Chemical mapping of a 207-nucleotide RNA with DMS and 2A3. It was measured as part of the RMDB library OK3TST.
[RMDB]
RNA sequence: GGGAACGACUCGAGUAGAGUCGAAAAGUUUUUACAAUUGGAGAUCACAUAGGCCCCAAUCAGAUUACAUGUGUGUAUCAAUGAAGUCUGAUAAGUAUCCAAAGAAAUACUGUGACUGUGAUUUGCCACAAUUUUCAGUCCUUUAUGAUAAUUGUACAAGAGAAGUGAGAUUCGUCUCACUUCUCUUAAAAGAAACAACAACAACAAC
Reactivity to DMS in 0.01 (KOAc 150mM, MgCl2 10mM, bicine 150mM(pH8.5), 24C), signal-to-noise 2, nucleotides 027 to 156: g000u010u000u020u000u020a090c090a040a090u000u020g000g010a140g010a120u010c020a000c050a170u020a160g040g040c080c030c010c040a120a060u010c010a030g020a050u000u000a180c010a010u000g000u010g050u010g030u000a100u000c080a060a070u000g010a170a080g010u000c010u000g020a020u000a060a080g020u000a050u000c030c080a060a110a300g000a070a040a050u000a000c010u000g010u010g010a040c020u000g020u010g000a160u000u000u000g000c030c050a040c010a010a050u000u000u000u000c000a110g000u000c070c080u000u000u000a050u050g010a110u000a030a060u020u000g010u010a070c140
Reactivity to 2A3 in 0.01 (KOAc 150mM, MgCl2 10mM, bicine 150mM(pH8.5), 24C), signal-to-noise 2, nucleotides 027 to 156: g030u090u070u070u020u130a080c050a170a090u110u080g040g000a020g030a040u090c050a050c070a190u130a080g110g060c000c000c000c000a000a020u000c000a010g000a010u000u180a020c010a040u050g030u020g050u020g110u280a040u250c010a050a010u000g040a050a030g010u000c000u000g010a010u010a060a030g070u040a020u010c040c000a000a000a100g080a070a080a000u010a010c000u000g130u170g130a040c040u020g010u020g060a010u050u040u160g190c050c000a040c060a010a040u050u020u060u040c010a010g000u020c000c010u060u130u020a040u010g040a000u000a140a020u100u080g010u080a040c080
DMS adducts were read by reverse transcription with MarathonRT. Conditions: 150 mM KOAc, 10 mM MgCl2 and 150 mM bicine (pH 8.5), 24 C.